[RMDB]
RNA sequence: GGGAACGACUCGAGUAGAGUCGAAAAGAAGUAGCGAAGCAGUCUGAAAUAAAGGGCUUUGGAGGAAAAGCGUCUAGAAAUAGAUGCGAAGGCUGCGGAACUCUUAGGCCGAAAAGCUACGAAGAAAGGGUUAUACAAACUUCGGUUUGUAUAACCCAAAAGAAACAACAACAACAAC
Reactivity to DMS in 0.01 (KOAc 150mM, MgCl2 10mM, bicine 150mM(pH8.5), 24C), signal-to-noise 2, nucleotides 027 to 126: g000a060a080g010u000a000g010c000g000a110a140g000c020a010g000u000c000u010g000a070a100a120u060a060a110a150g010g000g000c000u000u030u000g010g010a040g030g020a090a020a040a200g010c000g000u010c000u000a000g010a130a070a130u000a000g020a000u000g010c000g000a110a080g000g000c000u020g010c020g000g000a090a140c030u010c020u000u020a060g010g000c000c000g010a020a050a100a150g020c000u000a000c020g000a070a140g040a090a120a110
Reactivity to 2A3 in 0.01 (KOAc 150mM, MgCl2 10mM, bicine 150mM(pH8.5), 24C), signal-to-noise 1, nucleotides 027 to 126: g080a100a000g000u010a000g010c000g020a010a000g000c000a000g020u000c010u080g100a040a040a030u060a020a100a030g080g020g000c000u030u010u070g030g030a000g020g120a030a170a000a000g000c000g020u000c000u000a000g010a000a070a040u020a000g040a000u030g020c000g000a040a000g010g000c000u000g000c000g000g020a140a140c000u000c000u000u040a000g000g000c000c000g000a040a230a000a000g020c000u020a010c000g030a050a010g070a010a080a010